[RMDB]
RNA sequence: GGGAACGACUCGAGUAGAGUCGAAAAAAGCCUUCUAUCAGGAAGACGGUAAGUCAGUAUGGGAAGUUGUCGUAGGUGACUCAGCUGAGGCUUGGGCUAAGUCCUUUGGUAAGCUUGUAGCUAUGAAGAAGCGUGUAGACAUUAUCCGUCUCAACUAUAUACAACGUGUGUUCGCACACGUUGUAUAAAAAGAAACAACAACAACAAC
Reactivity to DMS in 0.01 (KOAc 150mM, MgCl2 10mM, bicine 150mM(pH8.5), 24C), signal-to-noise 2, nucleotides 027 to 156: a040a120g040c010c000u010u000c010u000a120u000c210a170g010g020a040a020g010a050c010g020g020u000a060a100g010u020c060a130g020u010a080u000g000g000g010a080a110g030u000u000g020u000c050g020u000a140g010g020u020g000a090c030u000c060a030g050c040u020g020a180g010g010c050u000u000g000g010g040c030u000a090a130g000u000c020c060u000u010u030g020g020u000a050a090g020c000u000u000g020u020a150g030c040u000a090u000g020a070a080g000a070a060g010c040g000u000g020u000a070g030a060c020a110u000u000a120u010c030c070g030u000c000u010c010a050a120c070u000a140
Reactivity to 2A3 in 0.01 (KOAc 150mM, MgCl2 10mM, bicine 150mM(pH8.5), 24C), signal-to-noise 2, nucleotides 027 to 156: a000a000g120c110c040u140u030c110u140a200u170c060a000g000g000a010a060g030a000c000g040g000u070a070a020g090u030c030a040g110u120a060u080g070g000g020a050a050g070u060u080g090u060c000g050u070a040g000g070u060g070a010c010u000c160a000g000c020u000g010a020g010g080c010u070u040g000g010g000c020u030a060a000g060u120c000c020u030u020u160g040g020u160a150a010g000c040u080u090g050u210a010g000c010u080a080u270g040a070a040g010a040a000g000c000g040u020g040u040a000g000a030c010a020u040u110a020u150c070c070g040u000c000u000c010a000a000c020u060a010